[RMDB]
RNA sequence: GGGAACGACUCGAGUAGAGUCGAAAAGAUCCGUUAAUAGGAUCCCCGUCUGACGGGAUCCUAGAAUUAGUGGAUCCUUCGCAGACCGGAUCCAUUGGUGAUCAACGUAUUAACGCUGCAGAGAGGAGUUACGUUUUUGCUUCGGCAAAAACGUAACAAAAGAAACAACAACAACAAC
Reactivity to 2A3 in 0.01 (KOAc 150mM, MgCl2 10mM, bicine 150mM(pH8.5), 24C), signal-to-noise 1, nucleotides 027 to 126: g010a020u020c000c020g000u020u100a130a080u060a120g020g000a010u020c000c000c000c030g060u120c200u200g080a100c060g070g000g000a000u000c010c000u000a040g060a140a120u080u070a020g060u000g020g010a010u000c000c000u120u080c070g000c050a040g010a060c000c050g000g010a020u090c000c060a020u000u140g090g000u190g040a020u060c020a020a050c020g010u060a060u130u130a170a010c040g000c030u070g000c040a010g040a010g020a010g210g010a090
Reactivity to DMS in 0.01 (KOAc 150mM, MgCl2 10mM, bicine 150mM(pH8.5), 24C), signal-to-noise 1, nucleotides 027 to 126: g000a020u000c010c040g000u000u010a040a020u010a030g000g000a020u000c020c060c020c070g020u010c200u000g020a070c240g000g000g000a080u010c000c000u020a010g010a300a100u010u000a060g030u010g010g010a040u010c000c020u010u010c140g020c050a080g000a110c080c300g000g000a000u000c050c010a150u000u010g010g000u020g020a040u000c060a070a060c100g040u020a080u050u010a100a160c080g020c020u010g030c060a150g010a160g010a040g020g010a190
Chemical mapping of a 177-nucleotide RNA with 2A3 and DMS. The data come from the RNA Mapping Database (RMDB), library OK2TST. Conditions: 150 mM KOAc, 10 mM MgCl2 and 150 mM bicine (pH 8.5), 24 C. Values cover nucleotides 27 to 126.